[RMDB]
RNA sequence: GGGAACGACUCGAGUAGAGUCGAAAAGCCUCCUCGCUUCCAUAGAAAGGGGACGGGGCAGAUCGCAAGUGCUACAACCGAGCGGUGGUUUCUGUCAAACUAAGCAGCCACUGCACAUCAAUUGACUAAACGAUGCCGAUCUUCGGAUCGGCAUCAAGACACUAAAUUUGUUCGCAAAUUUAGUGUCAAAAGAAACAACAACAACAAC
Reactivity to 2A3 in 0.01 (KOAc 150mM, MgCl2 10mM, bicine 150mM(pH8.5), 24C), signal-to-noise 2, nucleotides 027 to 156: g020c000c000u030c000c000u000c000g020c100u060u030c000c000a120u080a140g200a090a120a050g020g050g020g010a020c010g000g000g000g040c060a020g020a090u120c080g000c100a040a080g040u050g100c030u090a080c040a130a030c060c070g070a030g030c010g020g000u000g020g000u000u100u050c020u030g080u100c060a070a130a180c120u140a100a060g000c010a000g000c040c000a000c000u000g030c000a020c010a060u230c110a060a240u130u130g100a080c050u140a060a100a020c080g000a000u000g020c000c000g000a000u000c010u010u020c160g010g000a000u000c000g000g050c000a000u000c000a010a010
Reactivity to DMS in 0.01 (KOAc 150mM, MgCl2 10mM, bicine 150mM(pH8.5), 24C), signal-to-noise 1, nucleotides 027 to 156: g040c000c010u000c010c000u000c030g090c070u000u010c010c020a100u000a160g010a150a180a110g010g020g000g030a030c060g020g000g050g030c150a040g010a120u020c050g020c080a060a090g050u020g020c040u010a060c070a160a140c030c030g040a170g060c000g010g000u010g010g030u000u000u010c100u000g000u010c080a160a130a200c180u020a110a120g050c050a060g000c040c020a000c000u010g000c020a070c080a100u000c050a050a120u010u010g040a110c100u020a040a040a210c120g050a010u000g060c000c030g030a030u000c000u010u010c250g020g030a030u000c020g040g030c010a000u000c010a030a120